[RMDB]
RNA sequence: GGGAACGACUCGAGUAGAGUCGAAAACGCUUAGAACGUUUCCUACGGAAUCGACAAUCACCGUGGAGGUUUCUUCUGGGUCAGCUGUGGCAGUGUCGGUAGAAAACUCGUGGGCGCAUUCGGGGCAAAUUCGUUCUGAUUUCGAUCAGAACGAAUUAAAAGAAACAACAACAACAAC
Reactivity to DMS in 0.01 (KOAc 150mM, MgCl2 10mM, bicine 150mM(pH8.5), 24C), signal-to-noise 2, nucleotides 027 to 126: c050g030c060u000u000a110g050a140a140c020g010u000u000u010c020c010u000a110c120g010g010a100a070u010c060g020a070c080a110a080u010c100a070c040c030g000u010g010g000a080g000g000u010u000u000c000u000u000c030u000g020g010g000u000c050a050g000c060u000g010u000g020g000c070a080g010u010g000u000c030g000g010u000a080g000a070a040a060a080c090u000c090g010u010g010g000g000c160g010c060a080u000u010c050g010g000g000g000c140a050
Reactivity to 2A3 in 0.01 (KOAc 150mM, MgCl2 10mM, bicine 150mM(pH8.5), 24C), signal-to-noise 1, nucleotides 027 to 126: c020g020c050u120u190a080g040a270a030c010g000u000u070u020c010c010u070a030c040g020g080a080a060u110c060g020a030c060a030a090u070c030a030c060c030g060u100g070g020a080g070g000u040u080u030c010u070u000c030u090g040g090g000u020c020a030g000c060u070g000u090g050g030c010a010g000u000g040u130c080g050g000u020a070g120a030a140a010a000c020u040c050g010u020g000g020g000c020g060c030a010u110u060c010g030g020g000g000c000a000